Background:
Structure probing data (2A3 and DMS) for a 177-nucleotide construct. The RNA was probed in 150 mM KOAc, 10 mM MgCl2 and 150 mM bicine (pH 8.5) at 24 C. Reactivities are given for positions 27 through 126.
RNA sequence: GGGAACGACUCGAGUAGAGUCGAAAAGCCAUGCUGUGGGCUCUGACGCCCCCUCAGGUCAGAGCCUCCUUCUCCUUCCCUGACUGUGUCAGGCAGCUGCCCUUGGGUUGCAUGCAGAAGCGUGGAGAGGUGACAAUAUAUUCGUAUAUUGUCACCUAAAAGAAACAACAACAACAAC
Reactivity to 2A3 in 0.01 (KOAc 150mM, MgCl2 10mM, bicine 150mM(pH8.5), 24C), signal-to-noise 5, nucleotides 027 to 126: g020c010c020a020u060g010c030u090g020u140g050g010g000c010u000c000u010g000a010c010g110c020c030c000c000c010u090c060a040g000g090u010c000a000g000a000g000c010c000u030c000c000u050u040c010u020c000c000u070u070c010c010c000u000g020a030c030u190g050u080g030u300c020a020g020g010c010a030g020c010u050g010c020c010c000u080u150g150g000g000u040u060g010c050a060u070g000c010a020g020a180a000g020c030g020u020g010g030a080g020
Reactivity to DMS in 0.01 (KOAc 150mM, MgCl2 10mM, bicine 150mM(pH8.5), 24C), signal-to-noise 9, nucleotides 027 to 126: g010c020c020a030u000g010c040u000g020u000g010g010g010c010u000c010u000g010a030c020g000c070c030c010c020c020u000c090a160g000g000u000c010a010g000a030g010c010c000u000c070c030u000u000c030u000c030c060u000u000c110c040c010u000g000a050c020u010g010u010g010u000c030a040g000g010c130a050g010c020u000g010c010c020c050u010u010g020g020g020u000u000g010c020a070u000g010c080a090g010a090a060g020c040g030u000g000g010a160g000

DMS adducts were read by reverse transcription with MarathonRT.